[RMDB]
RNA sequence: GGGAACGACUCGAGUAGAGUCGAAAAGCGCAGGAGUGGCUGUGGUAAGUACCUUACUUACCAACCACAUGGUUCCAGGUUCAGUUCUACUGCGUGGGAGCUUGGACAAGUGUCUUCUAUUACAGCCGACAAGAAUAACGUUCGCGUUAUUCUUGUCAAAAGAAACAACAACAACAAC
Reactivity to 2A3 in 0.01 (KOAc 150mM, MgCl2 10mM, bicine 150mM(pH8.5), 24C), signal-to-noise 4, nucleotides 027 to 126: g010c010g000c020a000g000g100a100g060u030g030g000c160u130g030u020g300g000u000a010a000g000u080a110c050c080u090u130a010c020u000u000a010c020c010a000a020c010c000a010c010a020u070g120g000u050u010c010c010a010g030g010u020u030c020a020g010u040u010c040u050a120c020u020g010c000g000u050g010g080g000a010g010c020u130u130g000g020a010c010a050a050g100u100g030u080c090u150u000c040u100a150u190u160a120c080a090g050c060c070
Reactivity to DMS in 0.01 (KOAc 150mM, MgCl2 10mM, bicine 150mM(pH8.5), 24C), signal-to-noise 7, nucleotides 027 to 126: g010c010g020c010a020g000g010a200g020u000g010g030c250u000g020u000g010g010u000a000a000g010u000a100c300c270u010u010a070c000u000u000a000c000c010a070a100c020c010a020c020a130u010g010g010u000u000c010c010a090g010g000u000u000c020a080g000u000u000c050u000a100c000u000g000c020g020u000g010g020g000a010g010c010u000u010g010g000a010c080a160a110g010u000g000u000c060u000u000c050u000a080u010u010a110c160a120g030c180c120

An RNA of 177 nucleotides, treated with 2A3 and DMS and read out base by base. DMS adducts were read by reverse transcription with MarathonRT. Conditions: 150 mM KOAc, 10 mM MgCl2 and 150 mM bicine (pH 8.5), 24 C. For 2A3, 6,699 sequencing reads were counted.